[RMDB]
RNA sequence: GGGAACGACUCGAGUAGAGUCGAAAAGAUGAUUAAUGAAUUGCUUUAAACCAGCUUUACUUAGUACUUAGGAAAGCUAGCCCAGAAGACAGAAGAGGUUCAUGAAGUACUGGUCAGCCUAGGACAGCUAUCGUGCUAGGUUCGCCUAGCACGAUAGAAAAGAAACAACAACAACAAC
Reactivity to DMS in 0.01 (KOAc 150mM, MgCl2 10mM, bicine 150mM(pH8.5), 24C), signal-to-noise 2, nucleotides 027 to 126: g020a070u000g000a090u010u000a190a080u000g000a060a030u000u000g010c020u010u000u000a050a090a120c150c110a010g000c000u000u000u010a060c030u000u000a010g000u000a060c150u000u000a010g010g000a030a040a030g000c000u000a050g030c030c060c040a090g010a090a060g010a070c120a030g010a090a060g010a070g000g010u000u000c020a060u010g000a050a040g000u000a030c040u000g000g030u000c070a060g000c020c030u000a060g000g000a040c130a130g000
Reactivity to 2A3 in 0.01 (KOAc 150mM, MgCl2 10mM, bicine 150mM(pH8.5), 24C), signal-to-noise 1, nucleotides 027 to 126: g000a060u170g000a010u060u150a180a050u120g060a040a220u050u060g040c000u040u050u060a070a040a080c020c020a000g020c020u080u050u030a140c000u020u050a020g050u000a130c010u040u030a010g030g060a020a010a010g020c010u020a010g070c000c000c000a040g060a130a000g080a010c120a010g080a030a010g040a060g120g000u010u010c010a050u170g060a050a030g040u050a070c010u010g060g000u000c030a010g000c000c020u020a020g020g030a020c030a010g000
Conditions: 150 mM KOAc, 10 mM MgCl2 and 150 mM bicine (pH 8.5), 24 C. This 177-nucleotide RNA was probed chemically with DMS and 2A3. It was measured as part of the RMDB library OK2TRN. The DMS profile rests on 1,832 reads. DMS adducts were read by reverse transcription with MarathonRT.